[RMDB]
RNA sequence: GGGAACGACUCGAGUAGAGUCGAAAAGUAUUGAUUCGUCAAUACAACAAGCGUACUACGUGUGUAACGCCCUACGAAUAUCAUUCCCAAAUAGGAAUGAUACUAUAGGGAACUACGUUGACACACGUAUCGCAAUACAUUCAACUUCGGUUGAAAAUGCGAUAAGUGUGUUCGCACACUUAUCGCAAAAAGAAACAACAACAACAAC
Reactivity to 2A3 in 0.01 (KOAc 150mM, MgCl2 10mM, bicine 150mM(pH8.5), 24C), signal-to-noise 4, nucleotides 027 to 156: g010u000a000u000u010g000a020u040u180c240g060u020c080a000a000u000a000c010a080a020c120a210a070g020c000g050u100a090c050u010a000c060g000u010g000u000g000u020a000a000c010g030c000c020c010u020a020c090g160a300a160u000a000u040c000a000u000u050c000c050c030a210a120a140u270a080g000g000a000a000u000g000a000u000a010c020u010a020u050a000g000g010g020a060a040c120u210a030c110g030u010u050g190a000c000a000c010a010c000g000u010a000u000c010g000c000a000a010u160a060c100a110u030u020c010a000a000c010u080u060c290g170g000u000u020g010a000a010a040a040
Reactivity to DMS in 0.01 (KOAc 150mM, MgCl2 10mM, bicine 150mM(pH8.5), 24C), signal-to-noise 1, nucleotides 027 to 156: g010u000a000u000u000g040a040u000u030c230g070u000c030a030a010u010a030c000a120a160c010a060a200g030c000g040u010a100c120u000a010c010g070u010g040u000g000u000a080a030c060g000c000c000c020u000a010c110g040a100a010u000a020u000c000a010u000u000c000c000c010a090a100a200u000a050g000g000a030a010u020g010a000u000a040c030u000a060u000a030g000g000g000a160a230c060u000a160c040g000u000u010g020a060c020a010c000a010c010g000u000a000u000c020g000c000a090a150u010a040c120a180u000u000c000a040a020c010u000u010c230g020g000u000u000g010a000a020a080a140